[RMDB]
RNA sequence: GGGAACGACUCGAGUAGAGUCGAAAAGGACUCAGCCCAGGGAUGCAGGCAGUCUAGGAAUGAUAGUGGUAAUGCUGGUAGCAGAGUGUACUCGUCAGGGUACUCCAGGGAAACAGAAACAACAGGAUAUGUAAACAUAUAGACAGCAUCGUUUGCAAUUUACUCAAAAUUUCGAUUUUGAGUAAAUAAAAGAAACAACAACAACAAC
Reactivity to 2A3 in 0.01 (KOAc 150mM, MgCl2 10mM, bicine 150mM(pH8.5), 24C), signal-to-noise 6, nucleotides 027 to 156: g050g000a020c020u010c070a020g020c010c030c010a020g030g020g000a040u060g010c030a020g040g010c010a020g020u040c030u080a060g030g090a120a060u100g060a070u090a070g060u060g060g020u080a090a040u100g030c030u030g040g050u060a030g030c040a010g060a030g070u040g020u040a030c020u020c040g110u110c120a090g000g020g000u010a010c000u000c020c030a030g040g000g030a020a060a020c020a020g070a070a090a000c030a030a010c020a060g060g030a040u050a020u130g050u040a030a080a040c040a010u100a010u040a110g090a050c020a020g020c010a030u060c080g020u020u030u020g010c010a020
Reactivity to DMS in 0.01 (KOAc 150mM, MgCl2 10mM, bicine 150mM(pH8.5), 24C), signal-to-noise 4, nucleotides 027 to 156: g010g010a110c030u000c030a130g050c020c020c030a150g010g030g000a090u000g020c030a100g010g020c010a090g010u010c040u000a130g020g010a110a100u020g010a080u010a080g030u000g000g010u000a090a100u000g020c050u010g010g030u010a080g020c040a100g010a140g030u010g010u000a030c020u000c030g000u000c220a140g020g030g020u000a030c010u000c030c020a150g030g000g010a100a070a260c040a090g000a100a050a050c040a050a090c060a030g020g020a090u000a030u000g010u000a030a050a030c030a070u000a100u010a100g010a100c070a060g030c040a160u000c030g000u000u000u010g030c060a100